An RNA of 207 nucleotides, treated with DMS and 2A3 and read out base by base. Reactivities are given for positions 27 through 156. The RNA was probed in 150 mM KOAc, 10 mM MgCl2 and 150 mM bicine (pH 8.5) at 24 C.

RNA sequence: GGGAACGACUCGAGUAGAGUCGAAAAUCUGGCUGAAUAAGUAUGUACCAUCAGCGCCCACAAGCGGUGUACCCACGUCUGAACCCCACGCCACUUCAAUAGCGUUGUCUCCAUCGCCCAAACCAGUGACUUUUUGACCGUCCAGAGUAGCCUGAACGUUACUGACUAGAUUCGUCUAGUCAGUAACAAAAGAAACAACAACAACAAC
Reactivity to DMS in 0.01 (KOAc 150mM, MgCl2 10mM, bicine 150mM(pH8.5), 24C), signal-to-noise 2, nucleotides 027 to 156: u010c050u000g010g020c010u000g040a080a090u020a080a130g030u000a090u010g030u000a130c060c030a080u020c030a070g010c020g020c030c020c020a130c090a070a120g000c040g000g060u010g000u010a080c050c020c010a070c090g000u000c020u020g030a160a130c030c000c000c030a130c080g000c020c020a030c050u000u000c080a050a130u010a060g030c030g030u000u020g010u010c020u000c020c050a080u010c060g020c030c020c030a040a120a080c050c030a060g040u010g010a070c060u010u000u000u000u000g010a100c040c020g030u000c020c020a120g040a090g050u000a080g010c070c020u000g010a040a130c140
Reactivity to 2A3 in 0.01 (KOAc 150mM, MgCl2 10mM, bicine 150mM(pH8.5), 24C), signal-to-noise 4, nucleotides 027 to 156: u050c050u030g070g010c010u020g040a070a060u130a220a050g070u120a130u230g070u100a070c060c030a070u070c030a020g040c010g040c040c020c000a090c060a050a080g060c060g060g030u030g000u060a070c000c000c020a050c070g010u010c030u030g110a120a140c040c000c000c000a010c030g010c000c000a030c010u090u070c090a080a210u050a140g020c020g010u020u070g060u020c030u000c030c000a030u060c050g040c000c000c000a070a050a040c010c000a020g030u010g120a060c020u100u030u020u090u070g040a030c010c020g020u000c000c020a010g010a020g040u040a020g090c000c090u100g030a030a010c060